[RMDB]
RNA sequence: GGGAACGACUCGAGUAGAGUCGAAAAUUCCGAGGGGACCGUCCCCCUCGGUAAUGGCGAAUGGGACCCAGAUCUCUCUCUAGCUUCCGAUAGAGAAGCGAGAGAAAGCUGGCUCUCCCUUAGCCAUGGGCAAGUAAGUUCGCUUACUUGAAAAGAAACAACAACAACAAC
Reactivity to 2A3 in 0.01 (KOAc 150mM, MgCl2 10mM, bicine 150mM(pH8.5), 24C), signal-to-noise 9, nucleotides 027 to 129: u110u020c000c000g000a000g020g020g010g030a110c080c090g170u220c020c000c000c000c000u000c000g000g000u020a030a020u010g000g000c010g030a060a040u040g000g000g000a020c050c000c010a020g010a090u050c040u000c000u000c000u000c030u100a050g010c000u000u000c010c010g290a300u170a230g160a020g000a030a000g000c000g000a000g000a000g000a020a000a000g030c000u000g010g000c000u000c000u000c000c000c000u000u010a000g000c000c000a010u040g000g020g040
Reactivity to DMS in 0.01 (KOAc 150mM, MgCl2 10mM, bicine 150mM(pH8.5), 24C), signal-to-noise 9, nucleotides 027 to 129: u060u030c000c000g000a030g020g020g020g010a110c180c200g000u050c120c010c010c000c010u000c000g000g000u010a020a020u000g020g000c000g010a210a060u000g000g010g000a020c210c000c000a010g000a080u020c030u000c030u000c010u020c000u030a140g020c010u000u000c000c010g050a180u050a130g020a140g020a000a000g020c010g000a000g000a000g020a010a030a030g020c000u000g010g010c000u030c070u010c010c000c010u020u030a200g020c010c010a000u020g010g010g020